[RMDB]
RNA sequence: GGGAACGACUCGAGUAGAGUCGAAAAAUGUUUUGGCAAUUCGGGCCAUGCUACUGUCCAUACCCCGACUAAGGAGGAGGCCUCUUAUAGGCAUAUUUCCCACAGCGCGGGGCUACGUAGCCACCGCAAGCGACAACACGUUCGCGUGUUGUCGCUUAAAAGAAACAACAACAACAAC
Reactivity to 2A3 in 0.01 (KOAc 150mM, MgCl2 10mM, bicine 150mM(pH8.5), 24C), signal-to-noise 2, nucleotides 027 to 126: a030u110g020u030u020u000u080g050g000c040a040a050u140u070c020g030g200g000c000c000a000u170g060c050u000a020c020u050g020u010c000c000a160u080a180c000c120c000c000g000a190c020u050a040a040g020g040a040g020g010a050g050g030c030c030u000c110u070u300a240u180a170g000g000c020a000u030a140u160u020u000c000c010c020a080c050a030g050c020g000c000g030g030g110g000c040u020a080c100g050u070a080g020c000c000a220c000c000g040c020
Reactivity to DMS in 0.01 (KOAc 150mM, MgCl2 10mM, bicine 150mM(pH8.5), 24C), signal-to-noise 1, nucleotides 027 to 126: a060u000g000u000u000u000u000g010g030c190a100a000u040u020c140g000g000g070c000c010a000u030g000c000u000a080c010u010g000u020c110c090a150u020a040c030c040c000c000g150a300c070u000a100a060g000g000a140g000g000a110g000g050c020c000u000c240u060u100a000u030a000g000g000c060a040u070a000u000u000u000c000c000c020a050c170a080g000c180g010c000g000g000g000g020c090u000a010c220g050u050a000g000c000c000a230c080c060g010c000
Overview:
Chemical mapping of a 177-nucleotide RNA with 2A3 and DMS. The RNA was probed in 150 mM KOAc, 10 mM MgCl2 and 150 mM bicine (pH 8.5) at 24 C. DMS (dimethyl sulfate) methylates the pairing face of unpaired adenines and cytosines. The data come from the RNA Mapping Database (RMDB), library OK1LIB.